[RMDB]
RNA sequence: GGGAACGACUCGAGUAGAGUCGAAAAGGACCUUCGGGUCCAUACUCCCGUAGGGUCCAGCGGGCCUUGGAUUUAUAGCUAUCUAUAUUCGAAAGAGUAUAGAAACGCUAUUGUCAGGCUACUGGACCCUAAACGGACGUGGCAGCUUCGGCUGCAAGUCUGGAAACAAUUUCGAUUGUUUCCAGACAAAAGAAACAACAACAACAAC
Reactivity to DMS in 0.01 (KOAc 150mM, MgCl2 10mM, bicine 150mM(pH8.5), 24C), signal-to-noise 1, nucleotides 027 to 156: g000g030a030c010c010u000u000c300g080g030g050u000c010c000a030u020a010c130u010c000c010c000g010u010a040g000g040g010u010c000c010a000g040c020g030g000g000c010c000u000u000g030g010a020u000u000u000a020u010a010g000c000u000a300u010c000u000a000u000a000u000u000c000g010a260a130a300g000a050g020u000a000u000a010g010a000a010a170c220g000c000u000a010u000u000g020u000c020a050g010g000c000u010a050c020u010g000g010a040c010c000c010u000a000a000a050c080g000g000a120c030g000u000g010g020c010a050g010c020u000u010c300g070g000c000u000g000c000a030a050
This 207-nucleotide RNA was probed chemically with DMS.